[RMDB]
RNA sequence: GGGAACGACUCGAGUAGAGUCGAAAAUGGACUUUUUACAGUUCCUACUUAUCCGGUUUUAACGCUGUUUGAUUGGCGCAAAGGUUUACGGAUAAACAACUAAUAAUUAAACCUUUUGUGUGCGAAAAUUGGACGUUUAGGUUCGCCUAAACGUCAACUAAUGCUUUUUCUUCGGAAAAAGCAUUAGAAAAGAAACAACAACAACAAC
Reactivity to 2A3 in 0.01 (KOAc 150mM, MgCl2 10mM, bicine 150mM(pH8.5), 24C), signal-to-noise 3, nucleotides 027 to 156: u090g020g020a060c050u120u070u050u100u270a150c200a070g000u070u080c010c000u020a080c020u040u020a000u000c010c000g000g000u000u030u020u090a060a020c050g020c020u060g070u150u120u130g230a150u100u160g080g020c000g000c020a020a010a000g010g000u000u000u000a000c000g010g010a000u020a020a140a010c030a030a020c060u150a080a110u110a180a040u200u100a020a000a000c000c000u030u010u090u090g050u010g000u020g050c090g070a080a040a040a120u110u120g080g000a010c000g010u000u000u000a000g030g000u020u040c190g030c020c000u000a000a000a000c000g000u000c000a000a000
Reactivity to DMS in 0.01 (KOAc 150mM, MgCl2 10mM, bicine 150mM(pH8.5), 24C), signal-to-noise 2, nucleotides 027 to 156: u000g030g020a090c040u020u000u000u000u000a150c090a230g010u010u000c000c040u010a060c140u010u000a020u010c000c000g000g020u000u000u000u000a200a140c010g020c000u010g010u000u000u010g040a190u000u000g000g000c000g030c020a030a030a030g090g000u000u010u000a140c010g000g020a030u010a000a050a160c060a110a110c090u000a100a150u000a110a180u000u000a020a020a020c000c000u000u000u000u010g020u000g010u000g010c010g020a080a090a080a200u020u000g020g030a020c060g000u000u000u000a030g010g030u010u000c300g000c030c000u000a000a010a000c010g000u000c000a010a080

Overview: Structure probing data (2A3 and DMS) for a 207-nucleotide construct. 2A3 is a SHAPE reagent: it acylates the 2'-hydroxyl of flexible nucleotides of all four kinds. It was measured as part of the RMDB library M2RFPK. The reactions ran in a buffer of 150 mM KOAc, 10 mM MgCl2 and 150 mM bicine (pH 8.5), at 24 C.